The record gives the reactivity of an RNA of 177 nucleotides to 2A3 and DMS.
2A3 adducts were read by reverse transcription with SuperScript II with manganese.
The data come from the RNA Mapping Database (RMDB), library VIROID.
The RNA was probed in 150 mM KOAc, 10 mM MgCl2 and 150 mM bicine (pH 8.5) at 24 C.
For 2A3, 3,736 sequencing reads were counted.
RNA sequence: GGGAACGACUCGAGUAGAGUCGAAAACGCGAAGGACGAAAGACUCGUCGUCGACGAAGGGUUCUUUCGUUCGCAAGGCUCCCUGCCGAGCUCGGGGCUGGAGCUUGGGACUGCUCAUAGAGAGCAGCAACUCCUUACACUUCGGUGUAAGGAGUUGAAAAGAAACAACAACAACAAC
Reactivity to 2A3 in 0.01 (KOAc 150mM, MgCl2 10mM, bicine 150mM(pH8.5), 24C), signal-to-noise 3, nucleotides 027 to 126: c120g000c010g080a170a050g090g010a010c010g010a020a000a000g000a000c010u010c030g030u000c000g110u130c170g140a230c040g010a080a030g040g030g010u220u110c000u000u000u000c000g000u000u010c010g010c010a010a030g090g020c020u040c010c000c020u020g010c000c000g050a030g000c020u020c070g090g000g130g010c090u110g080g020a020g000c000u000u010g020g020g030a020c010u020g010c000u000c010a020u170a090g200a010g000a000g060c010a000g000
Reactivity to DMS in 0.01 (KOAc 150mM, MgCl2 10mM, bicine 150mM(pH8.5), 24C), signal-to-noise 4, nucleotides 027 to 126: c180g010c130g010a180a200g020g000a010c000g010a020a000a010g000a030c000u000c010g000u000c010g020u010c300g000a090c060g000a060a050g000g000g010u000u020c000u000u000u000c000g000u000u010c000g000c080a100a130g010g000c050u000c010c000c020u000g020c010c010g010a060g020c020u010c020g000g000g010g020c130u000g010g010a020g010c010u000u010g000g000g010a170c000u000g000c000u000c000a160u020a160g010a230g000a010g000c000a010g000